[RMDB]
RNA sequence: GGGAACGACUCGAGUAGAGUCGAAAAGGGGAUCCCAUUUUCCAAAAGGUACUCGCCGAUUUUCUUGGCCAUGCUCCAAUUACUGAUCGACACCCGAAACAAAUUGGGUAUAGGCGACGUCCCGUAACCGUAGAUGGACAUCUUUUGCACUGGGGUAACUUUACGUUAACUUCGGUUAACGUAAAGUAAAAGAAACAACAACAACAAC
Reactivity to DMS in 0.01 (KOAc 150mM, MgCl2 10mM, bicine 150mM(pH8.5), 24C), signal-to-noise 2, nucleotides 027 to 156: g000g020g030g000a200u000c010c000c030a250u010u000u010u000c040c080a090a050a150a050g030g010u010a070c050u010c080g000c040c010g030a150u000u000u010u000c060u010u020g010g010c000c030a070u000g000c010u000c030c010a040a060u000u000a100c130u010g000a300u000c020g000a070c060a110c000c010c030g010a090a060a130c130a060a060a110u010u010g010g000g020u000a040u000a090g000g010c030g030a070c100g010u000c010c020c010g010u010a060a080c040c060g000u000a070g010a110u000g010g030a080c040a060u000c060u000u010u000u010g020c030a040c050u000g010g000g030g030u000a060
Reactivity to 2A3 in 0.01 (KOAc 150mM, MgCl2 10mM, bicine 150mM(pH8.5), 24C), signal-to-noise 5, nucleotides 027 to 156: g040g010g000g030a050u020c040c020c020a030u130u110u060u010c050c000a050a040a020a050g060g010u040a080c020u050c070g030c020c030g040a050u020u020u050u100c040u070u160g050g000c000c020a050u050g010c050u080c100c000a020a020u040u050a070c120u090g030a070u040c030g070a050c050a100c070c060c020g020a030a040a040c060a020a050a020u050u050g010g000g020u050a050u060a070g010g000c000g000a020c100g030u000c010c000c020g050u070a040a060c020c040g050u040a020g050a160u110g050g010a010c010a050u050c050u040u100u050u060g030c040a030c040u030g010g000g010g020u060a050
Record summary
This 207-nucleotide RNA was probed chemically with DMS and 2A3. DMS (dimethyl sulfate) methylates the pairing face of unpaired adenines and cytosines. The data come from the RNA Mapping Database (RMDB), library OK3TST. For 2A3, 3,835 sequencing reads were counted. Conditions: 150 mM KOAc, 10 mM MgCl2 and 150 mM bicine (pH 8.5), 24 C.